[RMDB]
RNA sequence: GGGAACGACUCGAGUAGAGUCGAAAAGAUAUGGACGAGGUUGAGAUCAUCGAUCUCGGAAACGAGGGAGAUCCAACUCGUCCUAAGUCAAAACCACCAAGUGAUUCUUCGGAAUCACUUGGUGGAAGAGUUAAAAUUUCUUCGGAAAUUUUAACUCAAAAGAAACAACAACAACAAC
Reactivity to DMS in 0.01 (KOAc 150mM, MgCl2 10mM, bicine 150mM(pH8.5), 24C), signal-to-noise 1, nucleotides 027 to 126: g000a060u000a300u000g010g010a000c000g000a070g020g040u000u000g000a160g000a000u000c030a140u000c140g010a060u000c000u010c010g010g010a110a060a180c000g000a000g000g020g000a040g000a010u000c000c000a030a000c010u000c000g010u010c000c010u010a000a040g000u010c030a080a090a170a200c000c000a000c010c000a000a010g020u000g000a000u000u000c000u000u000c270g030g030a010a010u010c000a000c010u000u000g010g010u000g000g000a010a020
Reactivity to 2A3 in 0.01 (KOAc 150mM, MgCl2 10mM, bicine 150mM(pH8.5), 24C), signal-to-noise 1, nucleotides 027 to 126: g020a030u080a030u140g000g000a020c040g020a060g200g010u180u070g140a270g020a300u040c040a060u300c080g090a110u020c020u000c010g030g000a090a030a000c020g010a000g010g010g000a030g000a000u000c000c000a000a010c000u010c010g010u000c000c000u010a020a000g000u000c010a050a010a080a110c000c010a000c000c010a020a010g000u000g010a010u000u000c010u050u230c300g120g000a010a000u040c020a000c040u000u000g010g000u000g000g000a000a020
The record gives the reactivity of an RNA of 177 nucleotides to DMS and 2A3. The RNA was probed in 150 mM KOAc, 10 mM MgCl2 and 150 mM bicine (pH 8.5) at 24 C. Reactivities are given for positions 27 through 126. It was measured as part of the RMDB library TTRDEL. For 2A3, 1,774 sequencing reads were counted. 2A3 adducts were read by reverse transcription with SuperScript II with manganese. The DMS profile rests on 935 reads.